[RMDB]
RNA sequence: GGGAACGACUCGAGUAGAGUCGAAAAAGCUCGACCUGAGUACGCUCAGGUCGAGCAUGGACUUCCCUUUGUCAUCCUAUGCCUGAGAAUAUAUGAAGGAGGCUGGGAAGGCAAAGGGACGUUCAAAUCUCCCUCCUUGAUUCGUCAAGGAGGGAGAAAAAGAAACAACAACAACAAC
Reactivity to DMS in 0.01 (KOAc 150mM, MgCl2 10mM, bicine 150mM(pH8.5), 24C), signal-to-noise 1, nucleotides 027 to 126: a000g080c000u000c000g010a000c000c050u010g000a010g050u000a070c200g000c040u000c000a000g000g060u040c000g060a020g080c080a040u000g000g020a000c000u000u000c000c000c010u000u000u000g000u000c000a130u000c000c000u000a060u050g040c010c000u000g100a140g000a130a210u030a090u130a270u120g000a080a240g010g000a000g000g000c030u000g000g010g000a010a010g000g000c000a000a000a000g000g010g010a000c010g000u000u020c000a040a170a130
Reactivity to 2A3 in 0.01 (KOAc 150mM, MgCl2 10mM, bicine 150mM(pH8.5), 24C), signal-to-noise 2, nucleotides 027 to 126: a000g010c000u000c000g000a000c020c020u000g000a000g060u040a040c250g060c030u000c000a000g000g000u000c000g000a010g020c000a000u010g000g000a000c000u000u000c000c000c000u000u000u000g000u010c020a020u010c000c000u050a030u300g000c000c010u060g030a110g130a300a020u290a080u140a080u300g070a070a060g200g110a020g000g000c000u000g000g020g000a040a010g000g000c000a000a000a010g000g000g000a000c000g000u000u000c000a070a120a000

Structure probing data (DMS and 2A3) for a 177-nucleotide construct.
Source: RMDB library RFM100, as collected in RNAgym.
High DMS reactivity at an A or C suggests that its Watson-Crick edge is free.
DMS adducts were read by reverse transcription with MarathonRT.
For DMS, 1,418 sequencing reads were counted.